An RNA of 177 nucleotides, treated with DMS and 2A3 and read out base by base. The DMS profile rests on 1,283 reads. The RNA was probed in 150 mM KOAc, 10 mM MgCl2 and 150 mM bicine (pH 8.5) at 24 C.
RNA sequence: GGGAACGACUCGAGUAGAGUCGAAAAACUAGGGAGAUGGUUUUCGCUAUGCUCCACCUCAUAUCUGACUGAAAUAGAAUUUUGUUCUUCCAUGAUGUAAUUUAGUCAAAUAAGAGGAGACAAGACAUAUUCAGGGACUCUUCGGAGUCCCUGAAUAAAAAGAAACAACAACAACAAC
Reactivity to DMS in 0.01 (KOAc 150mM, MgCl2 10mM, bicine 150mM(pH8.5), 24C), signal-to-noise 1, nucleotides 027 to 126: a060c060u010a190g020g000g010a020g000a070u020g000g000u070u010u040u010c240g020c070u000a000u010g000c130u040c000c010a300c080c000u000c010a160u010a010u000c070u010g000a040c000u000g000a020a040a110u020a040g010a080a030u040u020u000u030g000u030u030c100u000u050c190c020a040u000g000a060u010g010u020a100a050u000u000u020a020g000u000c000a000a000a040u020a070a000g050a050g000g000a140g000a050c150a090a050g000a020c170a120
Reactivity to 2A3 in 0.01 (KOAc 150mM, MgCl2 10mM, bicine 150mM(pH8.5), 24C), signal-to-noise 1, nucleotides 027 to 126: a000c110u110a050g040g050g050a000g000a000u000g010g050u080u150u120u290c060g020c010u000a010u160g070c000u000c000c000a000c000c000u000c000a060u040a000u000c010u000g000a000c000u000g030a010a020a020u300a030g150a000a000u060u180u090u190g200u080u010c010u050u010c010c080a150u300g000a140u090g040u130a110a160u000u000u000a000g000u000c000a000a000a000u140a080a030g000a000g000g000a000g000a040c100a030a030g000a130c050a110